Structure probing data (2A3 and DMS) for a 177-nucleotide construct. The reactions ran in a buffer of 150 mM KOAc, 10 mM MgCl2 and 150 mM bicine (pH 8.5), at 24 C.
RNA sequence: GGGAACGACUCGAGUAGAGUCGAAAAUGAGUUACGAUCCUCCGACUUACUUAAGAUCUCUCAACCUUUCGUAGCCAGGACUAUUAAGAUAUUGCAGGACGUUAUGGUGAAGGCUAAGUUCGUUAACAUUAAUCGAUUAGUUCGCUAAUCGAUUAAUAAAAGAAACAACAACAACAAC
Reactivity to 2A3 in 0.01 (KOAc 150mM, MgCl2 10mM, bicine 150mM(pH8.5), 24C), signal-to-noise 7, nucleotides 027 to 126: u110g000a010g040u070u110a060c070g030a090u040c010c010u000c020c020g030a020c020u030u080a010c010u040u030a120a080g070a200u030c020u000c020u000c050a090a120c010c000u020u080u060c040g030u020a030g050c010c010a040g040g040a050c030u030a050u190u100a100a040g060a120u080a050u140u140g030c030a020g000g060a010c020g020u040u020a070u140g020g010u030g030a030a020g000g000c010u020a040a020g040u030u030c050g030u080u050a060a020c020
Reactivity to DMS in 0.01 (KOAc 150mM, MgCl2 10mM, bicine 150mM(pH8.5), 24C), signal-to-noise 9, nucleotides 027 to 126: u010g010a080g010u000u000a080c120g010a110u000c040c020u000c080c060g010a080c050u000u000a050c050u000u010a060a080g000a090u000c040u000c060u000c050a080a110c060c030u000u000u000c060g010u000a080g010c030c030a070g010g010a080c060u000a080u000u010a060a090g000a090u000a080u000u000g010c060a080g000g010a060c060g010u000u000a040u010g010g010u000g000a090a070g010g000c050u000a040a060g010u000u000c050g010u000u010a060a100c160